[RMDB]
RNA sequence: GGGAACGACUCGAGUAGAGUCGAAAAUGCUGUCAACAAGGCGUAUGAAUGUCUUCUUAUCAUUAAUGAAUUCUUCCUUGCUGAGAUCACAUGGAAGACAAUGCCUCAAACCAUUAAGGAGAGACAAUCAUCGAGGGAAGUUCGCUUCCCUCGAUGAAAAAGAAACAACAACAACAAC
Reactivity to DMS in 0.01 (KOAc 150mM, MgCl2 10mM, bicine 150mM(pH8.5), 24C), signal-to-noise 1, nucleotides 027 to 126: u020g030c030u010g010u000c130a160a070c250a080a080g030g030c050g000u010a060u000g010a130a250u010g000u010c010u000u000c070u000u000a120u060c090a050u000u000a060a020u000g010a110a120u000u000c010u000u010c020c000u090u000g000c140u000g020a150g050a090u030c050a170c020a040u000g000g010a010a000g020a010c300a060a070u000g010c070c000u000c040a130a030a130c190c000a030u000u000a050a040g000g000a040g000a070g000a010c070a020a150
Reactivity to 2A3 in 0.01 (KOAc 150mM, MgCl2 10mM, bicine 150mM(pH8.5), 24C), signal-to-noise 2, nucleotides 027 to 126: u090g000c010u130g110u160c070a050a050c020a100a130g040g000c020g030u100a110u120g150a170a080u130g030u070c030u140u040c000u020u190a050u130c040a140u040u070a070a020u040g030a060a060u100u000c010u010u030c000c000u040u130g030c110u100g090a190g010a260u210c040a010c020a030u040g000g000a000a000g010a000c100a020a120u080g030c040c000u050c100a010a110a050c030c020a020u000u100a060a010g040g000a020g010a000g000a010c000a000a070
Conditions: 150 mM KOAc, 10 mM MgCl2 and 150 mM bicine (pH 8.5), 24 C. This 177-nucleotide RNA was probed chemically with DMS and 2A3. For 2A3, 967 sequencing reads were counted. For DMS, 573 sequencing reads were counted. 2A3 adducts were read by reverse transcription with SuperScript II with manganese. The data come from the RNA Mapping Database (RMDB), library OK2TST.